[RMDB]
RNA sequence: GGGAACGACUCGAGUAGAGUCGAAAAUCAGCUCGGUCUUGUAUAGGCCGUUGAUCGUCUCGGCUAGUGCAUUGUCAUAGGAGCUUCCGACCGCUCCGACCGACGGUUGGAUGCCUGCCUCGGCGAGCGCCGAGUAGUAGUUCGCUACUACUCGGCGAAAAGAAACAACAACAACAAC
Reactivity to DMS in 0.01 (KOAc 150mM, MgCl2 10mM, bicine 150mM(pH8.5), 24C), signal-to-noise 5, nucleotides 027 to 126: u010c040a120g010c100u000c030g020g010u000c000u000u000g020u020a130u010a030g020g020c000c010g010u010u010g010a060u000c030g020u000c010u000c150g010g020c020u010a050g030u000g010c020a050u000u000g020u000c010a040u000a230g000g010a070g000c010u000u010c100c130g000a070c180c180g000c030u000c010c020g010a120c300c060g010a010c020g020g010u020u020g010g010a020u000g000c010c000u000g000c000c010u000c150g010g010c010g000a040g030
Reactivity to 2A3 in 0.01 (KOAc 150mM, MgCl2 10mM, bicine 150mM(pH8.5), 24C), signal-to-noise 4, nucleotides 027 to 126: u060c010a000g050c050u000c040g010g030u020c030u090u250g240u190a240u170a180g000g000c010c010g010u000u050g040a090u010c010g020u000c020u010c010g040g010c080u180a030g010u060g160c030a120u100u200g030u060c010a030u060a050g030g030a020g020c000u110u010c090c080g120a120c010c060g010c040u030c010c040g040a030c000c020g020a020c010g030g070u060u130g120g030a020u010g010c020c010u000g000c000c000u000c010g010g020c020g020a020g080

The record gives the reactivity of an RNA of 177 nucleotides to DMS and 2A3. The 2A3 profile rests on 3,882 reads. It was measured as part of the RMDB library OK2TRN.